RNA sequence: GGGAACGACUCGAGUAGAGUCGAAAAAAAACCAGCUGUGUCUUUUGAUUAUCUUAUUAGGGAGGCUAAGACUAGAGUUUUAGUCGUCGUUAAUUCCCAAGAUGUCUAUAAGAGUCUUACCAUAGUUACAGGAUAGGGUUCGCCCUAUCCAAAAGAAACAACAACAACAAC
Reactivity to 2A3 in 0.01 (KOAc 150mM, MgCl2 10mM, bicine 150mM(pH8.5), 24C), signal-to-noise 9, nucleotides 027 to 129: a010a000a010a000c020c000a010g010c020u020g010u010g030u060c020u030u060u040u020g020a030u000u210a040u080c010u020u060a080u050u120a070g030g010g020a020g000g000c000u000a030a000g000a020c010u070a060g070a060g240u010u010u010u010a000g000u020c040g030u000c010g040u010u060a070a070u160u060c010c000c010a000a000g050a020u180g060u040c020u010a030u010a060a010g010a000g010u030c030u050u090a040c010c000a010u030a060g050u050u060a060c070a070
Reactivity to DMS in 0.01 (KOAc 150mM, MgCl2 10mM, bicine 150mM(pH8.5), 24C), signal-to-noise 6, nucleotides 027 to 129: a040a040a050a030c060c030a140g020c040u050g010u010g010u030c050u050u030u000u020g010a080u040u000a000u020c040u030u030a050u030u050a010g030g030g020a100g020g020c050u030a050a030g020a010c010u050a150g020a020g030u010u020u020u020a050g000u020c030g000u000c060g050u030u040a030a040u040u040c040c030c040a090a080g020a010u000g030u050c030u040a050u040a040a190g020a000g010u000c030u000u000a070c120c010a010u000a060g030u040u050a080c160a130
The record gives the reactivity of an RNA of 170 nucleotides to 2A3 and DMS. Source: RMDB library 15KLIB, as collected in RNAgym. Conditions: 150 mM KOAc, 10 mM MgCl2 and 150 mM bicine (pH 8.5), 24 C. For 2A3 the reverse transcriptase was SuperScript II with manganese. The 2A3 profile rests on 33,658 reads.